An RNA of 207 nucleotides, treated with 2A3 and DMS and read out base by base. Conditions: 150 mM KOAc, 10 mM MgCl2 and 150 mM bicine (pH 8.5), 24 C. For 2A3 the reverse transcriptase was SuperScript II with manganese. It was measured as part of the RMDB library RNAMAK.
RNA sequence: GGGAACGACUCGAGUAGAGUCGAAAACGCUGGGACCCGAUGGUAGGCAAGGCCAUACCUGAAGCGCGCACGGGUAGGCUGAUGACCCGAGAGUAGGGUCCUGUGCUGAAGCGCGCACGGCAACCGAAAGGUGCGAGGCGUAGGAUUCGUCCUACAACGUUAUACAAUCUUUCGAGAUUGUAUAACGAAAAGAAACAACAACAACAAC
Reactivity to 2A3 in 0.01 (KOAc 150mM, MgCl2 10mM, bicine 150mM(pH8.5), 24C), signal-to-noise 6, nucleotides 027 to 156: c040g000c010u020g000g010g000a000c000c010c010g030a090u120g120g200u240a120g020g010c040a030a090g020g000c030c000a190u030a010c000c000u010g040a210a060g020c040g000c000g000c020a050c020g000g020g000u010a020g010g000c010u040g050a130u240g060a090c030c030c040g110a100g030a010g120u100a020g010g010g000u000c000c000u020g000u000g000c000u050g020a060a010g000c010g000c010g000c010a020c040g100g000c030a090a150c030c010g040a110a060a020g040g000u020g000c020g030a070g070g060c110g000u010a010g000g010a030u080u120c160g040u010c070c000u010a010c010a060a020
Reactivity to DMS in 0.01 (KOAc 150mM, MgCl2 10mM, bicine 150mM(pH8.5), 24C), signal-to-noise 3, nucleotides 027 to 156: c090g030c020u010g000g020g030a050c030c010c020g020a170u020g020g040u000a110g020g000c070a140a270g000g020c010c040a140u000a030c000c020u020g000a060a070g010c030g060c030g000c020a300c040g010g010g010u010a060g030g020c020u000g000a140u010g000a170c200c010c020g000a250g000a150g000u000a180g000g000g010u000c000c000u010g010u000g000c000u000g000a070a070g020c030g010c010g020c020a160c040g020g000c040a090a150c030c020g020a110a150a150g020g020u000g020c020g020a150g000g010c080g010u010a060g000g000a100u020u020c100g000u000c010c000u000a040c010a070a210